[RMDB]
RNA sequence: GGGAACGACUCGAGUAGAGUCGAAAAAGGACCUUGAAAAAGGCGGUCACGUCACUACGAGUCACGCUACCCAGGAUGUCGUCAGGUUGCAUGGCUUCAACGGCGUCCCACAUCUCCAAAGUGACCACGGUUCUAAGAGGUUCGCCUCUUAGAACCGAAAAGAAACAACAACAACAAC
Reactivity to DMS in 0.01 (KOAc 150mM, MgCl2 10mM, bicine 150mM(pH8.5), 24C), signal-to-noise 1, nucleotides 027 to 126: a020g030g020a090c000c000u030u000g000a060a040a140a000a020g010g020c080g050g010u030c060a050c080g000u020c080a030c000u030a160c130g000a070g000u010c030a080c200g000c070u030a110c020c000c030a200g000g030a020u010g010u060c030g030u000c170a060g000g010u000u000g030c100a000u010g000g000c000u030u000c150a080a060c100g010g000c020g000u000c030c020c100a030c130a030u010c100u000c010c140a040a170a020g000u020g000a030c010c030a160
Reactivity to 2A3 in 0.01 (KOAc 150mM, MgCl2 10mM, bicine 150mM(pH8.5), 24C), signal-to-noise 2, nucleotides 027 to 126: a000g120g010a110c000c010u000u020g000a040a030a000a000a000g040g000c050g050g020u040c040a000c040g000u030c040a010c100u180a090c050g020a030g040u040c010a020c100g040c040u110a110c040c000c000a030g060g050a060u130g070u130c020g080u050c040a080g000g150u060u050g030c170a170u120g120g000c000u060u060c040a090a000c040g020g010c030g070u050c020c060c000a060c020a110u050c080u020c050c050a080a050a080g030u060g000a020c020c000a010
An RNA of 177 nucleotides, treated with DMS and 2A3 and read out base by base.
For 2A3, 1,153 sequencing reads were counted.
The reactions ran in a buffer of 150 mM KOAc, 10 mM MgCl2 and 150 mM bicine (pH 8.5), at 24 C.
Reactivities are rounded to 0.1 and cut off at 0 and 3.
For DMS, 816 sequencing reads were counted.